[RMDB]
RNA sequence: GGGAACGACUCGAGUAGAGUCGAAAACCCCAUGUCAAGAGGACCGACCUGCAGCCAAGCCUUUGGUUAUACCAAGGGUGCUGUUCACAGACUAAAUGAUGACGGGUUGCUAAUCACAAAGCGUGAUUGCAGCUCAAGAUAUAGUCGGACUCACUCUCCAUACGGAAAUCUUCGGAUUUCCGUAUGGAAAAGAAACAACAACAACAAC
Reactivity to 2A3 in 0.01 (KOAc 150mM, MgCl2 10mM, bicine 150mM(pH8.5), 24C), signal-to-noise 2, nucleotides 027 to 156: c000c000c030c010a120u120g080u150c080a130a080g000a000g030g010a170c010c000g020a050c010c020u040g000c020a000g000c040c030a060a070g010c010c000u010u000u000g000g000u070u210a090u110a180c020c020a000a020g000g000g020u080g000c000u010g000u050u060c020a010c040a060g050a090c040u190a110a120a110u160g110a110u070g000a050c090g010g000g030u010u000g010c120u300a040a000u010c000a000c070a130a280a090g150c140g070u000g000a000u010u010g000c000a000g000c000u000c020a000a000g060a000u140a000u040a160g000u000c000g000g020a030c000u000c000a020c020u030c000u030
Chemical mapping of a 207-nucleotide RNA with 2A3. For 2A3 the reverse transcriptase was SuperScript II with manganese. It was measured as part of the RMDB library ARCHII. The 2A3 profile rests on 735 reads.